[RMDB]
RNA sequence: GGGAACGACUCGAGUAGAGUCGAAAAUGGACUUUUUACCGUUCCUACUUAUCCGGUUUUAACGCUGUUUUAUUGGCGCAAAGGUUUACGGAUAAACAACUAAUAAUUAAACCUUUUGUGUGCGAAAAUUGGACGUUUAGGUUCGCCUAAACGUCAAGGUAGCAUAUAACUUCGGUUAUAUGCUACCAAAAGAAACAACAACAACAAC
Reactivity to 2A3 in 0.01 (KOAc 150mM, MgCl2 10mM, bicine 150mM(pH8.5), 24C), signal-to-noise 3, nucleotides 027 to 156: u110g040g040a060c060u100u100u090u120u120a090c040c010g000u010u020c010c000u020a040c060u050u030a020u000c000c010g000g040u010u010u000u030a050a020c030g010c010u020g130u140u160u080u160a130u120u200g050g000c010g020c020a030a000a000g000g000u010u010u000a000c010g000g000a000u020a040a060a000c010a060a000c060u170a080a120u120a140a030u170u130a030a000a010c000c000u020u020u040u110g050u020g010u000g050c080g070a020a050a100a140u130u100g110g000a000c000g000u010u000u000a000g010g030u020u020c120g120c000c000u000a000a000a010c000g000u000c010a000a000
Reactivity to DMS in 0.01 (KOAc 150mM, MgCl2 10mM, bicine 150mM(pH8.5), 24C), signal-to-noise 1, nucleotides 027 to 156: u000g030g000a050c060u000u010u000u010u000a100c070c000g000u000u000c000c000u020a080c090u020u010a020u000c020c010g000g000u020u000u010u000a270a070c040g010c010u000g010u010u000u000u000a170u000u000g040g030c000g000c020a020a040a020g020g020u000u000u000a160c010g010g010a010u000a000a030a230c050a070a220c090u010a110a160u000a110a180u010u000a000a020a020c000c010u000u000u000u010g000u000g040u000g030c020g020a020a070a100a230u010u000g030g000a020c010g050u000u000u010a010g020g010u010u000c300g000c000c000u000a000a010a000c000g050u000c010a000a040

Chemical mapping of a 207-nucleotide RNA with 2A3 and DMS. It was measured as part of the RMDB library M2RFPK. 2A3 adducts were read by reverse transcription with SuperScript II with manganese. The DMS profile rests on 3,075 reads.